Annotation:
An RNA of 207 nucleotides, treated with 2A3 and DMS and read out base by base. Reactivities are given for positions 27 through 156. For 2A3, 8,650 sequencing reads were counted. 2A3 adducts were read by reverse transcription with SuperScript II with manganese.
RNA sequence: GGGAACGACUCGAGUAGAGUCGAAAAGGGGUCGUCCGUUGAAACGAGACAUAGCAUCGAUCGUACCUGAAGCCUCCACGGGUACGGGAGCUAUGCUCGUGGAGGACGACGGAGGCACCCAAAUCAUAAAAGUUCGGUUCGCCGAACUUUUAUGAAAUACUUAAAAAUGGUUCGCCAUUUUUAAGUAAAAAGAAACAACAACAACAAC
Reactivity to 2A3 in 0.01 (KOAc 150mM, MgCl2 10mM, bicine 150mM(pH8.5), 24C), signal-to-noise 3, nucleotides 027 to 156: g020g010g070g040u040c000g010u000c000c000g070u110u060g000a000a000a000c000g000a000g110a070c000a010u000a000g010c000a010u300c040g000a000u000c000g000u000a000c000c000u000g030a100a030g020c000c000u020c000c000a010c010g000g010g000u000a000c000g000g010g000a010g000c000u000a000u010g000c010u010c010g000u000g000g010a020g000g000a000c000g000a000c010g000g010a000g000g000c010a030c000c000c010a060a050a050u030c000a000u000a000a010a000a000g000u000u010c010g020g030u050u100c230g040c090c010g000a000a000c000u000u000u000u000a000u000g000a000a000a000
Reactivity to DMS in 0.01 (KOAc 150mM, MgCl2 10mM, bicine 150mM(pH8.5), 24C), signal-to-noise 2, nucleotides 027 to 156: g000g040g020g000u000c040g030u000c010c000g010u000u000g030a280a230a050c040g010a080g010a120c030a060u000a030g010c020a300u010c180g000a060u010c000g010u000a030c000c000u050g000a050a090g020c000c000u000c030c010a300c030g010g000g030u000a010c020g010g000g010a020g010c010u000a010u000g000c000u030c000g000u000g020g010a030g020g030a050c010g010a040c030g010g000a060g060g080c020a070c000c010c010a050a100a190u010c000a010u000a000a000a020a000g000u000u000c010g020g000u010u000c300g050c000c000g010a010a000c000u000u000u000u000a000u000g000a010a100a190